[RMDB]
RNA sequence: GGGAACGACUCGAGUAGAGUCGAAAAGAUAUGGAGAUUGAUACGGGAGCUCUGGAGUCGGAAACGACUCCAAGAGCGAGGAUCGUAGCAAUCUCCUAAGUCAAAUCUCGAGCUUCGGCUCGAGAAACUGUUCAGUAUUGUUCGCAAUACUGAACAGAAAAGAAACAACAACAACAAC
Reactivity to 2A3 in 0.01 (KOAc 150mM, MgCl2 10mM, bicine 150mM(pH8.5), 24C), signal-to-noise 1, nucleotides 027 to 126: g010a010u090a010u130g000g020a010g000a010u040u030g000a000u000a000c000g020g080g040a140g040c000u030c000u000g020g000a020g020u010c010g000g000a120a020a030c020g010a030c020u020c020c030a000a040g010a000g020c010g010a010g040g040a070u110c000g010u010a000g010c010a010a010u000c030u000c000c000u000a040a000g000u000c020a040a040a240u050c000u000c000g010a010g010c020u180u300c300g150g000c010u020c000g000a020g010a020a000a000
Reactivity to DMS in 0.01 (KOAc 150mM, MgCl2 10mM, bicine 150mM(pH8.5), 24C), signal-to-noise 1, nucleotides 027 to 126: g000a030u000a300u020g000g000a020g010a020u000u000g000a040u000a010c010g020g000g000a060g030c000u000c000u000g010g020a010g020u000c000g020g010a130a060a170c020g040a010c000u010c000c010a000a010g000a000g040c000g000a030g010g010a070u000c000g020u000a020g000c020a030a010u000c000u000c010c000u000a000a030g000u000c020a110a080a170u010c000u000c000g000a000g030c000u000u010c240g040g040c000u000c010g030a000g000a020a030a170

An RNA of 177 nucleotides, treated with 2A3 and DMS and read out base by base. It was measured as part of the RMDB library TTRDES. For 2A3, 2,953 sequencing reads were counted. DMS adducts were read by reverse transcription with MarathonRT. The RNA was probed in 150 mM KOAc, 10 mM MgCl2 and 150 mM bicine (pH 8.5) at 24 C.